[RMDB]
RNA sequence: GGGAACGACUCGAGUAGAGUCGAAAACGCUGGGCAAAGACCCGAUAACGUCAACAGCGUCUGAAGCGCGCACGGACGACAUGACGUAAGCGCUUUGCCUGUGCUGAAGCGCGCACGGCAACCGAAAGGUGCGAAAGGAGCGGUUUCGACCGCUCAAUAACAUUUCUCGUUUCGACGAGAAAUGUUAAAAAGAAACAACAACAACAAC
Reactivity to 2A3 in 0.01 (KOAc 150mM, MgCl2 10mM, bicine 150mM(pH8.5), 24C), signal-to-noise 2, nucleotides 027 to 156: c010g080c030u020g000g020g000c010a000a030a000g040a020c130c080c050g040a190u230a130a040c030g000u040c060a100a120c100a300g030c010g000u000c020u050g050a150a000g000c000g000c010g000c000a030c000g000g000a000c000g010a020c040a180u300g010a000c000g010u060a080a180g270c070g000c240u010u000u020g000c000c000u040g000u010g000c030u070g020a140a050g000c020g010c000g000c020a020c000g050g000c000a030a010c000c020g070a070a060a020g000g000u000g000c020g020a080a140a080g150g000a000g000c000g000g100u020u180u210c260g120a100c030c000g000c010u030c000a000a000